[RMDB]
RNA sequence: GGGAACGACUCGAGUAGAGUCGAAAAAGCAGCGAAACGUAGUUGUCCACAUUAAUUUGAUAUUGAGGGAACGACGAACACACCAAACGCGCCAGUGGCCCCAGUAGCCGAAAGAUCCGUUGCUGAAGACGAAUACAAGGUUCGCCUUGUAUUCGUCAAAAGAAACAACAACAACAAC
Reactivity to 2A3 in 0.01 (KOAc 150mM, MgCl2 10mM, bicine 150mM(pH8.5), 24C), signal-to-noise 5, nucleotides 027 to 126: a000g060c060a020g000c020g070a080a040a060c060g010u050a060g000u060u030g120u080c020c000a050c000a010u140u180a110a160u140u170u260g200a130u120a050u120u140g050a170g000g040g020a020a150c040g020a000c020g060a200a020c060a010c010a020c040c050a070a110a030c040g010c020g010c010c000a040g020u040g110g000c000c020c000c000a030g020u040a010g010c020c040g070a080a080a000g030a060u020c000c020g000u000u050g000c000u030g010a060a020
Reactivity to DMS in 0.01 (KOAc 150mM, MgCl2 10mM, bicine 150mM(pH8.5), 24C), signal-to-noise 3, nucleotides 027 to 126: a000g030c030a060g000c010g030a080a060a080c130g020u000a050g010u000u000g000u020c030c030a120c070a080u010u010a050a120u010u050u030g050a110u010a050u020u010g010a140g040g000g020a070a040c050g000a050c040g000a100a070c070a100c050a130c020c060a040a100a060c090g010c070g000c060c050a080g020u000g040g030c040c020c020c030a060g010u000a110g000c040c030g000a030a040a070g010a070u000c060c010g020u000u000g000c040u020g000a120a100
This 177-nucleotide RNA was probed chemically with 2A3 and DMS. It was measured as part of the RMDB library OK1LIB. Conditions: 150 mM KOAc, 10 mM MgCl2 and 150 mM bicine (pH 8.5), 24 C. For DMS, 4,824 sequencing reads were counted. High 2A3 reactivity points to a flexible backbone, as in loops and unpaired stretches. Reactivities are given for positions 27 through 126.